[RMDB]
RNA sequence: GGGAACGACUCGAGUAGAGUCGAAAAGAUAUGGAACAUGGCUUAACUACCCUGACAUGCUCAAAAAGGGUCGGAAACGACCUACAAAGAGCAACAGCAGGGUAGUUAAGCCCGCUGUUCCUAAGUCGAAGUUAAUGCAGUUCGCUGCAUUAACUUCAAAAGAAACAACAACAACAAC
Reactivity to DMS in 0.01 (KOAc 150mM, MgCl2 10mM, bicine 150mM(pH8.5), 24C), signal-to-noise 2, nucleotides 027 to 126: g010a180u010a300u010g020g010a040a010c000a040u000g000g010c000u010u000a000a010c010u000a000c010c010c000u000g000a050c100a240u000g000c000u030c020a010a130a090a190a200g000g020g000u010c000g040g000a100a110a300c000g030a010c000c010u010a070c180a110a190a180g000a000g020c000a000a070c300a140g020c010a040g010g000g010u000a010g010u010u000a010a000g000c000c010c000g000c000u000g000u000u000c000c000u010a020a070g010u010c110